Structure probing data (DMS and 2A3) for a 177-nucleotide construct. For 2A3, 3,053 sequencing reads were counted. The DMS profile rests on 4,324 reads. It was measured as part of the RMDB library OK2TRN.
RNA sequence: GGGAACGACUCGAGUAGAGUCGAAAACAGGGACACAGUCUGUAGUUGAGUCCAAAACAGAUAAAGCAGGUGAUCCAGUAACUCCAUGGGCUAGGUGCAACCAAAACAUAGGCAGUCGUCUUACUGGCAUGCCCUAUAGGUUCGCCUAUAGGGCAUGAAAAGAAACAACAACAACAAC
Reactivity to DMS in 0.01 (KOAc 150mM, MgCl2 10mM, bicine 150mM(pH8.5), 24C), signal-to-noise 4, nucleotides 027 to 126: c070a130g000g010g000a080c030a070c080a100g010u010c040u000g010u000a070g010u000u010g010a120g010u000c050c050a050a080a100a060c100a040g010a070u000a040a090a110g000c080a050g010g020u000g010a100u000c020c020a080g020u010a050a090c060u000c030c040a100u000g000g000g000c020u000a030g010g010u000g020c070a070a080c070c060a040a030a030a080c170a070u000a070g010g010c020a030g000u000c090g010u000c070u010u000a070c080u000g010g000
Reactivity to 2A3 in 0.01 (KOAc 150mM, MgCl2 10mM, bicine 150mM(pH8.5), 24C), signal-to-noise 2, nucleotides 027 to 126: c010a020g040g000g060a000c020a000c000a040g080u040c010u040g080u080a080g030u070u080g120a060g040u070c030c030a000a060a040a000c030a000g080a080u130a050a100a010g050c070a020g000g050u010g010a040u070c020c010a010g030u010a030a040c020u000c030c010a040u080g030g030g010c010u020a060g030g060u060g020c020a030a110c010c020a090a060a020a000c050a070u100a040g010g070c020a020g030u030c000g010u000c040u060u070a080c020u020g060g030